[RMDB]
RNA sequence: GGGAACGACUCGAGUAGAGUCGAAAAGGACAGUGACGAUUGAUAUUUAAGGUCUCGUUCGUCGUAAAAACGGCCGUAAAAAGCCUAUUUGCCGACCAUUCUGUUAUAUCACCACCCAUAUUCUGAGUUAAUUCUAAAGUUUCGACUUUAGAAUUAAAAAAGAAACAACAACAACAAC
Reactivity to 2A3 in 0.01 (KOAc 150mM, MgCl2 10mM, bicine 150mM(pH8.5), 24C), signal-to-noise 9, nucleotides 027 to 126: g070g010a010c040a050g040u050g070a020c040g030a070u080u210g050a020u070a100u120u240u150a140a060g110g010u010c010u000c040g020u040u040c010g010u010c010g010u040a020a000a010a020a050c100g000g000c010c000g000u030a020a030a020a030a000g000c010c000u020a090u010u040u040g030c030c020g010a020c000c010a020u080u020c010u030g070u080u030a110u010a020u160c040a040c040c010a040c000c010c030a040u080a110u150u020c030u020g060a080g200
Reactivity to DMS in 0.01 (KOAc 150mM, MgCl2 10mM, bicine 150mM(pH8.5), 24C), signal-to-noise 7, nucleotides 027 to 126: g020g020a060c040a060g000u010g000a030c030g000a070u020u020g010a030u010a050u020u020u020a120a110g010g010u000c010u010c020g010u000u000c050g010u000c040g020u010a030a030a030a100a120c270g000g000c000c000g010u010a050a070a110a130a190g010c010c010u010a270u010u000u010g020c080c000g000a030c020c050a080u010u010c020u000g000u010u000a060u010a080u000c060a050c060c090a080c030c010c020a070u020a080u010u000c030u000g000a150g010
Chemical mapping of a 177-nucleotide RNA with 2A3 and DMS. Source: RMDB libraries RFM100 and RFMREP, as collected in RNAgym. Conditions: 150 mM KOAc, 10 mM MgCl2 and 150 mM bicine (pH 8.5), 24 C. DMS adducts were read by reverse transcription with MarathonRT.